An RNA of 177 nucleotides, treated with DMS and 2A3 and read out base by base.
The reactions ran in a buffer of 150 mM KOAc, 10 mM MgCl2 and 150 mM bicine (pH 8.5), at 24 C.
Values cover nucleotides 27 to 126.
For 2A3 the reverse transcriptase was SuperScript II with manganese.
In probing experiments dimethyl sulfate is read out at A N1 and C N3, which are open when not base-paired.
[RMDB]
RNA sequence: GGGAACGACUCGAGUAGAGUCGAAAAUCGUCGACGAAGGCAUGUGAGCCCAACUCGAUGAAGAGCGUCAGCGGACGGCCUCUGAGACGAGCGAUGGACAGUAGAGCUCGCCUCUACCAGUCGCGUGGUACAAUAUAAUGUUCGCAUUAUAUUGUACAAAAGAAACAACAACAACAAC
Reactivity to DMS in 0.01 (KOAc 150mM, MgCl2 10mM, bicine 150mM(pH8.5), 24C), signal-to-noise 9, nucleotides 027 to 126: u000c010g020u000c000g010a300c190g010a160a060g010g010c010a070u010g040u000g010a210g010c000c010c090a080a180c170u000c000g010a120u010g010a120a110g000a030g010c050g010u000c220a090g010c050g000g010a080c050g010g000c020c010u000c010u000g000a300g000a040c030g010a060g000c000g000a030u000g000g000a020c020a030g000u000a010g000a060g010c040u020c230g010c160c000u000c000u000a010c000c010a020g000u000c000g000c010g010u000g010
Reactivity to 2A3 in 0.01 (KOAc 150mM, MgCl2 10mM, bicine 150mM(pH8.5), 24C), signal-to-noise 9, nucleotides 027 to 126: u030c000g010u010c010g010a030c010g030a140a070g020g000c070a100u210g090u110g220a050g010c000c000c000a020a030c000u010c020g130a150u230g150a130a090g010a010g010c050g050u090c070a030g040c040g100g090a020c020g020g010c010c000u000c020u030g040a040g000a020c020g010a010g010c010g010a020u060g000g010a010c010a020g020u030a010g000a000g000c060u090c180g060c100c000u000c000u000a010c000c000a000g000u010c000g000c010g010u020g090